The data come from the RNA Mapping Database (RMDB), library RFM100. An RNA of 177 nucleotides, treated with 2A3 and read out base by base. Reactivities are given for positions 27 through 126. The reactions ran in a buffer of 150 mM KOAc, 10 mM MgCl2 and 150 mM bicine (pH 8.5), at 24 C.
RNA sequence: GGGAACGACUCGAGUAGAGUCGAAAAUUCGGAGGGCGAAGAAACUCAUUAAUUCAUUGAUGAGGGCCCCUCAUUCAAAUGUUAUGCUUCGUGCUUCCCUCACAUUUUGAGUUGAUUCUUCCCAAUUGUCACAAACUACUUUCGAGUAGUUUGUGACAAAAGAAACAACAACAACAAC
Reactivity to 2A3 in 0.01 (KOAc 150mM, MgCl2 10mM, bicine 150mM(pH8.5), 24C), signal-to-noise 3, nucleotides 027 to 126: u060u090c030g060g020a020g000g010g000c030g030a050a000g030a020a110a020c060u040c050a050u050u080a070a110u190u070c130a020u060u110g010a010u030g010a010g010g090g060c000c100c010c000u000c000a020u110u040c030a050a020a060u030g030u070u060a010u110g050c010u020u030c030g010u050g250c010u020u040c020c000c000u030c000a070c020a030u020u040u010u040g040a050g000u010u080g100a170u110u030c000u010u000c000c000c000a030a060u020u030
For 2A3, 1,372 sequencing reads were counted.